[RMDB]
RNA sequence: GGGAACGACUCGAGUAGAGUCGAAAAUGGUAAGGGAUGUCAUAGUACCAAAGCUUGGACAAUGGCCGACAAUGAUAGACGUAGCAACCGCUGUGUAUAUGCUAACGGUUUUCCACCCUGAGACCAGAGAGAUAGGGACUUUCGAGUCCCUAUCUCUAAAAGAAACAACAACAACAAC
Reactivity to DMS in 0.01 (KOAc 150mM, MgCl2 10mM, bicine 150mM(pH8.5), 24C), signal-to-noise 4, nucleotides 027 to 126: u000g000g000u000a080a100g000g010g010a120u020g010u020c030a100u030a090g000u010a080c030c100a040a090a130g000c090u020u010g000g020a050c070a090a050u010g000g000c030c030g000a060c110a050a080u010g000a040u010a020g010a050c070g010u010a040g000c040a110a100c150c250g020c030u000g000u020g010u020a040u000a050u010g010c010u020a100a070c000g000g010u000u000u040u010c090c140a110c040c000c020u000g000a100g010a100c020c020a090g000
Reactivity to 2A3 in 0.01 (KOAc 150mM, MgCl2 10mM, bicine 150mM(pH8.5), 24C), signal-to-noise 4, nucleotides 027 to 126: u120g010g000u100a060a050g060g030g010a040u100g070u030c010a060u080a120g020u060a190c020c010a090a010a000g010c080u090u110g020g000a040c040a120a160u060g040g000c020c000g010a050c070a040a090u100g000a040u020a090g050a020c030g050u030a010g000c020a020a220c110c110g020c070u060g020u030g010u060a000u030a000u160g080c010u020a180a030c020g000g000u020u000u090u010c050c010a070c040c010c000u020g040a040g070a020c030c060a010g010